[RMDB]
Chemical mapping of a 177-nucleotide RNA with 2A3 and DMS.
RNA sequence: GGGAACGACUCGAGUAGAGUCGAAAAGAGGCUUUGUAUCUGGGCACUAGUCUCAACAGAUGACGACACUUCUGUUCAAUCUCAUAUCCUAUCCAUACUGGAUGUAAAACACGCAUGUGGCGCUGACGCUACAUGUCGACUUCGGUCGACAUGUAGCAAAAGAAACAACAACAACAAC
Reactivity to 2A3 in 0.01 (KOAc 150mM, MgCl2 10mM, bicine 150mM(pH8.5), 24C), signal-to-noise 5, nucleotides 027 to 126: g050a000g010g030c030u150u110u050g040u100a100u070c060u080g010g070g000c010a030c050u020a010g020u000c010u010c030a040a030c010a010g060a040u060g040a050c080g040a010c020a030c070u030u010c010u020g020u080u090c030a050a090u000c030u010c030a070u070a030u120c000c010u040a040u000c030c000a030u060a230c080u110g030g010a020u030g060u130a040a050a010a030c060a010c070g030c010a030u100g040u040g130g000c040g000c060u030g040a040c080
Reactivity to DMS in 0.01 (KOAc 150mM, MgCl2 10mM, bicine 150mM(pH8.5), 24C), signal-to-noise 2, nucleotides 027 to 126: g050a010g000g000c050u000u000u020g000u000a080u030c060u000g000g000g040c060a030c130u000a030g070u020c010u010c080a050a130c050a030g000a050u010g000a150c140g000a070c090a080c060u000u000c030u000g000u030u000c180a080a190u050c020u020c000a050u030a070u010c000c010u070a010u020c090c050a060u000a100c140u050g010g000a000u000g000u000a020a050a070a040c190a000c190g000c040a060u000g010u030g000g010c100g030c090u000g010a080c190
The RNA was probed in 150 mM KOAc, 10 mM MgCl2 and 150 mM bicine (pH 8.5) at 24 C. 2A3 adducts were read by reverse transcription with SuperScript II with manganese.